An RNA of 177 nucleotides, treated with 2A3 and DMS and read out base by base. 2A3 adducts were read by reverse transcription with SuperScript II with manganese. For DMS the reverse transcriptase was MarathonRT. The RNA was probed in 150 mM KOAc, 10 mM MgCl2 and 150 mM bicine (pH 8.5) at 24 C. Values are in units of 0.01, from 0 to 300, in steps of 10. For DMS, 2,176 sequencing reads were counted. DMS (dimethyl sulfate) methylates the pairing face of unpaired adenines and cytosines. Source: RMDB library OK2TRN, as collected in RNAgym.
RNA sequence: GGGAACGACUCGAGUAGAGUCGAAAAAUUCGUGUGGAAGUCACUGGCCCGUUGGCCAAUGGCUGAUCACGCUAUUGAGUUUGAAGAUAGCAAAGUGAUGGUGACUUACUUGACUGACCUAUUGAUGCACUUCCCUUGCAUUCGUGCAAGGGAAGUGAAAAGAAACAACAACAACAAC
Reactivity to 2A3 in 0.01 (KOAc 150mM, MgCl2 10mM, bicine 150mM(pH8.5), 24C), signal-to-noise 1, nucleotides 027 to 126: a010u050u080c060g000u030g010u030g040g020a000a010g010u010c010a010c010u010g000g010c010c010c030g160u070u300g030g000c000c000a000a000u030g010g010c000u000g000a020u020c000a000c030g010c000u000a020u010u180g080a080g290u030u300u260g060a060a070g040a050u060a020g020c040a050a020a000g040u060g070a060u070g040g060u010g020a080c000u020u160a000c010u050u000g060a040c020u020g010a030c000c000u050a130u110u210g050a060u110g040
Reactivity to DMS in 0.01 (KOAc 150mM, MgCl2 10mM, bicine 150mM(pH8.5), 24C), signal-to-noise 3, nucleotides 027 to 126: a050u010u000c060g030u000g010u000g010g020a140a020g020u000c000a000c020u010g000g010c000c000c300g020u010u000g020g040c000c000a010a020u000g000g000c000u000g040a220u000c000a020c020g000c110u010a030u010u000g000a180g000u010u000u000g000a110a200g010a050u010a020g020c030a040a090a050g010u010g000a040u000g010g000u000g020a120c090u000u000a040c030u000u000g000a050c010u000g000a220c290c030u000a120u000u000g000a180u010g020